[RMDB]
RNA sequence: GGGAACGACUCGAGUAGAGUCGAAAAUGGAGAUCGGCCUGGAGGUCCUCGAAAGCGGUCGCCGGCCGCGACUGCUGGCGCGCCUGGAGCGACGCGAGAUCGCCGUGCGCCUGCUCGACUGCGACGACUCCAGUGGAGGAUUCGUCCUCCACUGGAGAAAAGAAACAACAACAACAAC
Reactivity to DMS in 0.01 (KOAc 150mM, MgCl2 10mM, bicine 150mM(pH8.5), 24C), signal-to-noise 2, nucleotides 027 to 126: u020g030g010a070g000a040u010c050g010g000c030c000u020g030g020a130g010g000u000c000c030u000c050g020a080a150a080g020c060g000g000u010c000g020c080c070g020g020c080c090g000c040g010a040c070u020g010c010u000g000g000c030g030c050g020c050c120u010g010g010a110g000c050g000a040c010g030c140g010a160g000a100u010c060g000c020c030g000u010g000c070g000c000c010u000g000c040u000c040g000a070c060u000g010c040g000a090c100g010a180
Reactivity to 2A3 in 0.01 (KOAc 150mM, MgCl2 10mM, bicine 150mM(pH8.5), 24C), signal-to-noise 1, nucleotides 027 to 126: u110g050g000a050g040a100u060c040g020g020c020c000u060g070g030a080g000g080u030c000c000u020c020g040a090a030a000g020c030g010g020u030c020g000c030c030g060g000c000c050g020c020g040a060c080u070g000c040u030g010g000c020g000c010g000c040c040u170g120g030a140g030c040g060a030c030g000c050g050a110g000a180u050c020g020c030c000g040u060g020c030g000c000c000u010g060c050u040c040g030a060c020u090g020c010g050a040c030g020a010
Source: RMDB library OK2TRN, as collected in RNAgym. The record gives the reactivity of an RNA of 177 nucleotides to DMS and 2A3. In probing experiments dimethyl sulfate is read out at A N1 and C N3, which are open when not base-paired. For DMS the reverse transcriptase was MarathonRT. The 2A3 profile rests on 1,608 reads. 2A3 adducts were read by reverse transcription with SuperScript II with manganese. The reactions ran in a buffer of 150 mM KOAc, 10 mM MgCl2 and 150 mM bicine (pH 8.5), at 24 C.